RNA sequence: GGGAACGACUCGAGUAGAGUCGAAAAGAAAGAAAGAAAGCGGUUGGGUGGGUCCAUCGACCGUCGUGGCGUAUUCGGACGCUUUACCACGACGCGAGGAAAUAGCGAGACCGACCACACCCUUUAACAGAGGUAUAGUAGUUCGCUACUAUACCAAGAUUCUCUCUAACUUCGGUUAGAGAGAAUCAAAAGAAACAACAACAACAAC
Reactivity to DMS in 0.01 (KOAc 150mM, MgCl2 10mM, bicine 150mM(pH8.5), 24C), signal-to-noise 1, nucleotides 027 to 156: g020a190a200a200g010a130a120a150g000a100a050a200g010c120g030g010u000u000g000g000g050u000g000g010g010u000c020c020a040u020c000g020a070c210c030g020u000c000g050u010g010g010c010g040u000a110u000u000c080g000g000a120c030g030c080u010u000u000a030c010c020a030c010g010a010c010g000c010g000a190g010g010a000a090a100u000a180g050c040g010a090g030a060c050c030g000a060c000c010a040c010a030c050c010c020u000u000u000a070a130c080a090g000a080g020g010u000a000u010a020g000u000a020g020u000u000c300g020c020u020a010c010u000a000u010a000c000c000a020a020
Reactivity to 2A3 in 0.01 (KOAc 150mM, MgCl2 10mM, bicine 150mM(pH8.5), 24C), signal-to-noise 3, nucleotides 027 to 156: g030a010a040a000g030a000a080a000g090a080a030a000g130c240g080g010u160u090g060g020g000u080g050g000g010u000c010c010a090u040c000g030a060c050c010g000u000c000g000u010g000g020c030g020u070a160u130u200c090g080g070a020c040g010c020u120u160u110a040c030c000a000c000g000a000c000g000c020g000a020g020g080a000a150a080u120a020g070c030g000a060g020a080c000c040g080a000c000c030a020c010a000c020c000c000u000u030u010a090a070c110a020g080a060g070g010u000a000u000a000g020u000a000g020u030u080c250g020c090u010a000c000u000a000u030a010c000c000a000a000
An RNA of 207 nucleotides, treated with DMS and 2A3 and read out base by base. For DMS the reverse transcriptase was MarathonRT. For 2A3 the reverse transcriptase was SuperScript II with manganese.